Source: RMDB library OK3TST, as collected in RNAgym. The record gives the reactivity of an RNA of 207 nucleotides to DMS and 2A3. The 2A3 profile rests on 1,417 reads. For 2A3 the reverse transcriptase was SuperScript II with manganese. Values cover nucleotides 27 to 156. For DMS the reverse transcriptase was MarathonRT.
[RMDB]
RNA sequence: GGGAACGACUCGAGUAGAGUCGAAAAUAACACAUCUGAGGGCUGUGUUUGGCCUGUGGAUCAAUAGUUUACAUCCCUUGAUUUAACUAGAUGUGGGUGGCCGAAUUCCCAAGUGAGUUAUGUGAGGCCAAGGAGGCCCCAGAGAGCAUAACAGUAACCUACUAUAUGACUUCGGUCAUAUAGUAGGAAAAGAAACAACAACAACAAC
Reactivity to DMS in 0.01 (KOAc 150mM, MgCl2 10mM, bicine 150mM(pH8.5), 24C), signal-to-noise 2, nucleotides 027 to 156: u020a090a080c020a010c060a040u000c020u000g000a210g040g020g020c030u010g030u000g040u000u000u020g020g010c000c000u010g030u000g030g010a080u000c040a080a090u000a080g020u000u010u000a100c120a090u010c020c020c020u000u010g020a180u000u010u000a080a170c100u000a110g010a070u010g000u010g020g030g030u000g010g040c060c090g000a070a190u000u000c020c000c010a130a240g010u000g000a040g020u000u000a010u000g020u000g010a130g000g020c010c000a030a100g000g010a290g010g030c010c010c010c000a090g010a080g000a160g000c000a040u000a010a040c000a130g000u010a070a220
Reactivity to 2A3 in 0.01 (KOAc 150mM, MgCl2 10mM, bicine 150mM(pH8.5), 24C), signal-to-noise 3, nucleotides 027 to 156: u120a030a040c020a020c020a040u010c010u010g020a230g070g000g000c030u030g050u030g120u180u080u100g020g020c010c000u010g010u030g040g030a030u050c070a020a110u130a140g070u060u110u080a020c060a060u060c010c000c000u020u040g050a060u010u050u090a060a110c070u050a030g030a150u040g100u140g070g010g040u020g050g080c040c020g020a010a070u070u030c000c000c020a030a000g160u130g070a160g020u060u030a020u050g050u010g090a020g000g000c000c000a000a000g050g030a080g020g000c000c000c000c010a020g010a000g000a000g040c010a020u050a080a010c020a010g100u110a020a020